The data come from the RNA Mapping Database (RMDB), library OK2TRN. The record gives the reactivity of an RNA of 177 nucleotides to DMS and 2A3. DMS adducts were read by reverse transcription with MarathonRT. Values cover nucleotides 27 to 126. High DMS reactivity at an A or C suggests that its Watson-Crick edge is free.

RNA sequence: GGGAACGACUCGAGUAGAGUCGAAAAGUGACUCAGUUGGGCACUGUGGCCUACGCCUGUAAUCCAAGUGAGACAGCCAAGUCUAAAGGGGUCCCGCUUUGGGAGGCCGAGACGGGCGGAUCACGAGGGCUAGACAAAAAUUCGUUUUUGUCUAGCCAAAAGAAACAACAACAACAAC
Reactivity to DMS in 0.01 (KOAc 150mM, MgCl2 10mM, bicine 150mM(pH8.5), 24C), signal-to-noise 6, nucleotides 027 to 126: g010u010g010a110c020u000c020a120g010u010u000g000g000g020c090a080c040u000g020u010g000g010c010c050u000a100c160g010c010c010u000g010u010a100a090u000c010c030a070a110g010u010g010a020g010a220c110a090g010c000c020a050a150g020u010c050u010a050a100a160g010g010g010g000u000c000c000c010g020c300u010u020u010g010g000g010a030g000g010c030c010g010a050g000a030c020g020g000g010c010g010g010a130u000c020a020c020g010a150g000
Reactivity to 2A3 in 0.01 (KOAc 150mM, MgCl2 10mM, bicine 150mM(pH8.5), 24C), signal-to-noise 3, nucleotides 027 to 126: g040u020g090a100c000u010c060a180g080u180u140g060g010g000c010a020c090u060g050u080g180g000c000c060u050a050c090g000c000c010u060g040u140a030a040u000c000c010a000a050g050u000g010a040g030a040c020a020g000c000c020a160a100g000u000c010u120a170a110a070g020g000g030g100u020c010c010c000g080c130u220u200u100g030g000g010a010g080g090c030c010g010a000g000a010c000g000g020g000c000g010g020a040u030c000a000c030g020a080g010
The reactions ran in a buffer of 150 mM KOAc, 10 mM MgCl2 and 150 mM bicine (pH 8.5), at 24 C.